[RMDB]
RNA sequence: GGGAACGACUCGAGUAGAGUCGAAAACUUAUUGGUAGAAAGGUCUUAUAAUUAUGGGGUAACUUUGCCAACUAAUAGUACUGGGGUUUGAUGUGGGUUACUUACAUCAGAAGUCACAUCAACUUUUUGACAUUAGUUUCUAUUCCACCAUGUGCUACCAUGAGCCAUGGUUCGCCAUGGCUCAUGGAAAAGAAACAACAACAACAAC
Reactivity to 2A3 in 0.01 (KOAc 150mM, MgCl2 10mM, bicine 150mM(pH8.5), 24C), signal-to-noise 1, nucleotides 027 to 156: c030u040u010a080u240u120g060g010u050a050g050a120a030a090g050g000u080c080u130u140a150u200a300a300u250u280a090u140g000g000g000g010u050a080a000c080u060u060u080g000c050c000a040a030c060u080a050a080u060a110g040u100a240c000u030g000g000g010g000u000u270u160g030a000u030g000u010g000g030g000u000u080a110c070u000u060a030c040a090u120c010a020g040a090a000g280u000c000a000c000a000u030c000a030a050c000u110u080u180u300u100g050a000c000a000u000u010a050g080u000u040u000c010u040a150u000u000c000c010a100c010c000a160u130g010u000g060c000u000a050
Chemical mapping of a 207-nucleotide RNA with 2A3. The 2A3 profile rests on 296 reads. Conditions: 150 mM KOAc, 10 mM MgCl2 and 150 mM bicine (pH 8.5), 24 C. Values cover nucleotides 27 to 156.